[RMDB]
Chemical mapping of a 177-nucleotide RNA with DMS. DMS adducts were read by reverse transcription with MarathonRT. Values cover nucleotides 27 to 126.
RNA sequence: GGGAACGACUCGAGUAGAGUCGAAAAAUCUCAGCAACAUUGCCCGUGAAGUCAUUCAAAUUCCAGAAUUCUUGAGCUCUCUGAAAUUGCUCAGAGAAUACGUUGGAGCUCUUCGCAAGCAUCCAGAAAAUUUAGGGGAUUUCGAUCCCCUAAAUUUAAAAGAAACAACAACAACAAC
Reactivity to DMS in 0.01 (KOAc 150mM, MgCl2 10mM, bicine 150mM(pH8.5), 24C), signal-to-noise 2, nucleotides 027 to 126: a140u000c000u000c000a120g000c070a070a080c110a050u000u000g000c210c010c020g000u010g010a030a020g010u010c010a020u000u020c030a010a030a050u000u010c000c020a100g000a160a070u000u010c020u000u000g000a080g010c030u000c100u010c080u000g010a040a080a110u010u000g010c080u010c010a020g030a040g000a040a040u000a060c180g010u000u010g010g010a080g000c020u000c020u010u000c250g010c150a080a030g010c020a050u000c010c010a110g010a070